[RMDB]
Chemical mapping of a 177-nucleotide RNA with 2A3. Reactivities are given for positions 27 through 126. Conditions: 150 mM KOAc, 10 mM MgCl2 and 150 mM bicine (pH 8.5), 24 C.
RNA sequence: GGGAACGACUCGAGUAGAGUCGAAAAUCGAUCAAUGUCACCGGCGGUCAGGUGAUGUUCUGAUCAACAGCGGAGAUCCAUUAAGGAUCUCCGUGAGACUAUAGAAUGCCUGAUGCGCUACGCACAAACCCUCCCGGUACUUCGGUACCGGGAGGGUAAAAGAAACAACAACAACAAC
Reactivity to 2A3 in 0.01 (KOAc 150mM, MgCl2 10mM, bicine 150mM(pH8.5), 24C), signal-to-noise 2, nucleotides 027 to 126: u120c030g000a010u170c060a230a050u030g010u060c000a000c050c000g080g040c020g040g000u000c020a000g010g040u220g120a170u080g010u020u000c030u020g100a300u030c030a040a090c030a140g250c050g000g000a010g000a000u000c000c000a040u250u280a260a200g000g000a000u000c000u050c010c010g000u040g000a000g000a000c000u000a000u040a300g010a000a000u060g040c000c000u040g090a060u090g190c050g000c050u040a000c000g030c000a060c040a070a160
Annotation:
The 2A3 profile rests on 613 reads.